[RMDB]
RNA sequence: GGGAACGACUCGAGUAGAGUCGAAAAAAUGCAAGCUAAUGUGUCCCUGCCCACAGUGAACGCAGAGUCUGGAGGAGAGAGGCGGGAAAGCCACGUGGCUGUGCUGCCCUGGGCCAUGGAGACCUGCUAUGCAAGUAUGAUUCGUCAUACUUGCAUAAAAAGAAACAACAACAACAAC
Reactivity to DMS in 0.01 (KOAc 150mM, MgCl2 10mM, bicine 150mM(pH8.5), 24C), signal-to-noise 9, nucleotides 027 to 126: a060a050u010g010c040a070a080g010c090u010a080a080u010g010u000g010u010c020c010c020u000g000c020c020c030a100c170a080g010u010g010a080a090c160g020c040a050g000a140g010u000c020u000g010g010a130g010g000a090g000a090g010a100g010g020c020g010g000g000a050a060a040g000c030c010a140c300g010u010g010g020c010u000g010u000g010c020u000g000c030c010c020u000g000g010g000c030c020a070u010g010g000a070g010a050c020c010u000g010c070
Reactivity to 2A3 in 0.01 (KOAc 150mM, MgCl2 10mM, bicine 150mM(pH8.5), 24C), signal-to-noise 7, nucleotides 027 to 126: a000a010u180g000c040a020a050g030c020u140a140a140u110g030u020g040u060c010c000c000u020g020c020c010c000a080c020a070g090u070g160a140a020c070g000c040a010g040a030g100u000c020u050g090g050a050g050g020a040g020a010g000a020g030g010c020g010g010g020a100a080a000g020c030c000a090c180g100u200g020g000c020u030g060u100g050c010u020g000c000c000c010u040g040g150g000c010c020a100u140g050g020a030g000a030c010c010u020g010c030
Overview:
Source: RMDB library OK2TST, as collected in RNAgym. This 177-nucleotide RNA was probed chemically with DMS and 2A3. The RNA was probed in 150 mM KOAc, 10 mM MgCl2 and 150 mM bicine (pH 8.5) at 24 C. 2A3 adducts were read by reverse transcription with SuperScript II with manganese. For 2A3, 14,408 sequencing reads were counted.